[RMDB]
RNA sequence: GGGAACGACUCGAGUAGAGUCGAAAAGGCUGCAGCCGAGGGAGACCAGGAAGAUCUGCAUGGUGGGAAGGACCUGAUGAUACAGAGGAAUUACAACACAUAUACUUAGUGUUUCAAUGAACACCAAUCAUUUGACAAAAUUCGUUUUGUCAAAUGAAAAAGAAACAACAACAACAAC
Reactivity to DMS in 0.01 (KOAc 150mM, MgCl2 10mM, bicine 150mM(pH8.5), 24C), signal-to-noise 9, nucleotides 027 to 126: g000g020c040u010g020c060a100g020c030c040g000a100g000g000g000a090g000a100c060c040a070g010g020a110a080g000a080u010c050u010g010c080a060u010g000g010u010g000g010g020a100a090g010g000a120c050c020u010g000a070u020g000a110u020a060c090a050g000a080g000g000a100a060u020u020a080c150a050a050c090a030c080a070u020a080u020a090c110u020u030a070g010u010g000u010u010u000c080a050a080u020g010a090a090c080a100c040c080a060a180
Reactivity to 2A3 in 0.01 (KOAc 150mM, MgCl2 10mM, bicine 150mM(pH8.5), 24C), signal-to-noise 9, nucleotides 027 to 126: g040g000c030u060g010c040a030g020c020c020g010a080g010g040g010a070g020a040c020c020a020g040g040a040a060g040a090u030c020u050g030c050a060u070g030g010u060g020g030g030a040a050g030g010a030c010c010u050g040a090u060g000a010u070a100c040a030g060a040g070g060a060a040u180u090a070c050a130a010c020a010c020a060u110a020u120a270c090u130u140a060g020u020g020u030u010u040c070a100a130u140g040a050a010c030a020c070c000a010a030
Chemical mapping of a 177-nucleotide RNA with DMS and 2A3. For DMS, 30,623 sequencing reads were counted. The reactions ran in a buffer of 150 mM KOAc, 10 mM MgCl2 and 150 mM bicine (pH 8.5), at 24 C. Values cover nucleotides 27 to 126. It was measured as part of the RMDB library OK1LIB.